[RMDB]
RNA sequence: GGGAACGACUCGAGUAGAGUCGAAAAGAUGAGAGUUCAACUGUAGCAGAUUAGUUGGGUUAGAACAUCUUUUAACCGUUGUAUAGCUGUAUACAACGUGAAGAUCUACUACUUCACAACUCUCAGAGAUAGGUUUCUUCUUCGGAAGAGAUCUAUCAAAAGAAACAACAACAACAAC
Reactivity to 2A3 in 0.01 (KOAc 150mM, MgCl2 10mM, bicine 150mM(pH8.5), 24C), signal-to-noise 9, nucleotides 027 to 126: g140a070u060g000a000g000a000g010u010u050c040a080a040c060u040g010u040a010g010c040a010g010a080u050u070a030g110u080u120g070g030g030u070u090a070g050a090a040c030a100u060c000u020u090u010u060a040a030c030c010g000u000u000g030u000a010u000a020g190c260u180g090u300a010u000a010c000a010a000c010g020u040g060a050a020g010a010u010c010u020a030c000u000a010c000u040u060c080a040c040a070a020c000u000c000u000c010a000g010a000
Reactivity to DMS in 0.01 (KOAc 150mM, MgCl2 10mM, bicine 150mM(pH8.5), 24C), signal-to-noise 9, nucleotides 027 to 126: g010a130u000g000a010g000a020g000u000u000c110a080a090c140u010g010u000a020g010c070a050g000a050u000u010a050g010u010u010g010g000g010u010u010a050g010a050a110c200a070u030c050u000u000u010u010a040a080c120c010g000u000u000g010u000a010u000a030g000c210u040g010u000a030u000a000c000a000a000c010g010u020g000a080a100g000a020u000c030u010a090c040u010a010c010u010u010c120a120c300a050a020c020u000c010u000c000a020g010a160